[RMDB]
RNA sequence: GGGAACGACUCGAGUAGAGUCGAAAAUAUCGGAUGGCCUUCCUCGCCUGCAGUGUUCAGGCAACGACAGCACGUUUUGGCGGCACCGAUCUGCCCAUGUCGGAGGUGACAGCCGAGGAUAUGAAGAAGUAAGUUUUCCUUUCGAGGAAAACUUACUAAAAGAAACAACAACAACAAC
Reactivity to 2A3 in 0.01 (KOAc 150mM, MgCl2 10mM, bicine 150mM(pH8.5), 24C), signal-to-noise 3, nucleotides 027 to 126: u110a000u000c000g010g020a070u150g120g030c000c020u090u060c040c010u030c040g010c010c020u020g020c060a180g290u060g060u300u180c010a010g010g000c020a030a030c030g040a010c040a050g030c110a080c130g010u040u060u100u170g020g000c000g020g000c030a060c090c070g010a080u010c010u030g020c010c000c010a010u030g010u000c010g040g000a070g030g020u070g060a080c060a030g010c000c000g030a020g070g010a020u030a040u120g050a040a070g050a040
Reactivity to DMS in 0.01 (KOAc 150mM, MgCl2 10mM, bicine 150mM(pH8.5), 24C), signal-to-noise 4, nucleotides 027 to 126: u000a050u000c000g000g000a200u030g020g010c010c050u000u000c010c020u010c110g030c030c000u010g010c080a150g010u010g040u010u020c020a050g010g040c040a050a060c080g010a050c090a100g000c120a080c120g010u000u000u010u000g000g020c300g010g000c030a090c100c130g010a070u010c120u000g010c030c010c070a080u000g010u000c020g010g000a100g000g030u000g010a070c300a100g000c020c000g010a300g010g010a060u000a040u010g020a080a120g000a140
Chemical mapping of a 177-nucleotide RNA with 2A3 and DMS. For DMS the reverse transcriptase was MarathonRT. Conditions: 150 mM KOAc, 10 mM MgCl2 and 150 mM bicine (pH 8.5), 24 C. It was measured as part of the RMDB library OK2TST.